[RMDB]
Chemical mapping of a 177-nucleotide RNA with DMS and 2A3. For DMS the reverse transcriptase was MarathonRT. It was measured as part of the RMDB library OK2TST.
RNA sequence: GGGAACGACUCGAGUAGAGUCGAAAAGGAAAAUGGCACAAAAGAAUGCAAUUGUCCGGAAGCUUCCAAGCGUGGAGACGUUGGGAUGUACCACUGUAAUAUGCUCGGAUAAGACUGGCACACUAACGGAGAAGGUCUAAUUCGUUAGACCUUCUCCAAAAGAAACAACAACAACAAC
Reactivity to DMS in 0.01 (KOAc 150mM, MgCl2 10mM, bicine 150mM(pH8.5), 24C), signal-to-noise 3, nucleotides 027 to 126: g010g000a030a050a060a060u000g000g010c010a030c090a070a070a130a140g000a090a120u020g010c030a080a050u000u010g020u010c010c020g020g000a150a190g020c110u000u000c020c030a040a070g010c070g000u000g010g010a130g020a020c060g020u000u000g000g010g000a080u000g000u000a060c030c030a070c070u000g010u020a070a120u010a040u000g020c050u000c050g000g000a060u000a070a110g000a080c070u000g000g020c030a040c090a110c130u000a060a110c220
Reactivity to 2A3 in 0.01 (KOAc 150mM, MgCl2 10mM, bicine 150mM(pH8.5), 24C), signal-to-noise 1, nucleotides 027 to 126: g030g010a040a040a020a070u070g010g040c030a020c010a040a210a000a040g040a110a040u050g000c020a020a060u090u060g030u040c010c000g030g040a030a010g040c010u030u000c020c040a050a010g040c020g030u060g000g060a180g010a020c030g000u030u060g010g020g010a050u010g020u070a040c030c000a020c070u040g020u050a000a110u070a050u150g000c010u010c050g010g020a040u040a030a000g050a040c000u050g060g000c030a020c010a030c120u260a040a000c070
The RNA was probed in 150 mM KOAc, 10 mM MgCl2 and 150 mM bicine (pH 8.5) at 24 C.